[RMDB]
RNA sequence: GGGAACGACUCGAGUAGAGUCGAAAAUUUGGUUGCUAACUUCUACCUGCGGAUCACUUGCCUGCGGUACCGUCAUGUGGGAGACUGAGACGUCCUGGGUUCAAACCCACGUUAGCUCUGAGCAGACCAAUCUUCCGGGAUUCGUCCCGGAAGAUUGAAAAGAAACAACAACAACAAC
Reactivity to 2A3 in 0.01 (KOAc 150mM, MgCl2 10mM, bicine 150mM(pH8.5), 24C), signal-to-noise 1, nucleotides 027 to 126: u020u010u090g030g020u010u040g030c010u030a000a100c020u050u000c000u060a110c020c040u080g020c020g010g020a090u110c050a050c040u030u240g090c000c030u050g050c020g000g060u050a110c020c030g160u160c050a030u080g000u010g030g010g030a060g000a050c030u080g020a020g020a080c050g040u030c040c070u020g050g000g010u030u170c070a100a120a140c000c030c030a010c000g030u000u040a040g000c000u020c040u030g070a050g000c050a050g050a090c040
Reactivity to DMS in 0.01 (KOAc 150mM, MgCl2 10mM, bicine 150mM(pH8.5), 24C), signal-to-noise 2, nucleotides 027 to 126: u000u010u010g000g030u000u000g000c010u000a080a070c030u000u000c030u000a070c030c060u000g030c020g010g010a070u010c090a020c050u010u000g000c020c030u010g000c040g010g000u000a050c030c030g000u010c050a020u000g030u020g010g000g010a050g010a270c090u000g010a150g010a120c090g000u000c060c130u000g010g000g010u010u010c260a050a100a220c040c010c000a020c130g010u000u000a090g020c070u000c020u010g010a050g030c060a080g000a080c050